[RMDB]
RNA sequence: GGGAACGACUCGAGUAGAGUCGAAAAAAUGCAUUGUCAGAACUUAGAAAUCAUUCAAUUGAUAUGUUGGCAGAUGUGAAUCAAAAACAUUUUGAUUUAAUUAAGUCGGAUAAAAAUUUAAGCAUUAAGCGUGAGAGAAUUUCGAUUCUCUCACGCUAAAAGAAACAACAACAACAAC
Reactivity to 2A3 in 0.01 (KOAc 150mM, MgCl2 10mM, bicine 150mM(pH8.5), 24C), signal-to-noise 1, nucleotides 027 to 126: a000a000u100g050c000a020u000u040g000u000c060a060g000a060a010c000u000u000a000g140a190a220a040u060c070a040u000u200c050a120a230u110u000g000a110u130a000u270g070u010u000g020g000c190a060g000a210u120g100u090g020a030a090u040c060a000a000a000a000a110c070a000u080u030u000u000g000a000u000u000u000a160a100u120u000a000a000g060u060c000g000g000a000u060a020a040a020a030a000u050u260u030a010a020g000c000a000u060u070a020